Structure probing data (DMS) for a 177-nucleotide construct.
RNA sequence: GGGAACGACUCGAGUAGAGUCGAAAAGUCUCAAAUUUGUUGGGCAAAGGUGAGAGAGCACGACCAAACACUUGGAAGCAAGCCUUAAUAUCUCUGAGUAAGAGAAAUUUUUCCGCUCCACGUGUGAUAAAAUUGACUGGUUCGCCAGUCAAUUUUAAAAAGAAACAACAACAACAAC
Reactivity to DMS in 0.01 (KOAc 150mM, MgCl2 10mM, bicine 150mM(pH8.5), 24C), signal-to-noise 3, nucleotides 027 to 126: g020u010c020u000c020a090a090a130u010u010u010g030u000u010g000g000g010c040a040a070a080g010g010u030g010a060g000a080g010a070g030c090a080c080g010a140c060c080a090a080a060c010a010c010u000u010g010g010a090a090g040c020a100a120g000c080c050u000u010a030a040u000a110u000c000u000c000u010g000a230g000u010a150a050g000a010g010a010a080a040u020u000u000u000u010c060c060g020c020u000c010c010a010c050g000u000g000u000g000a190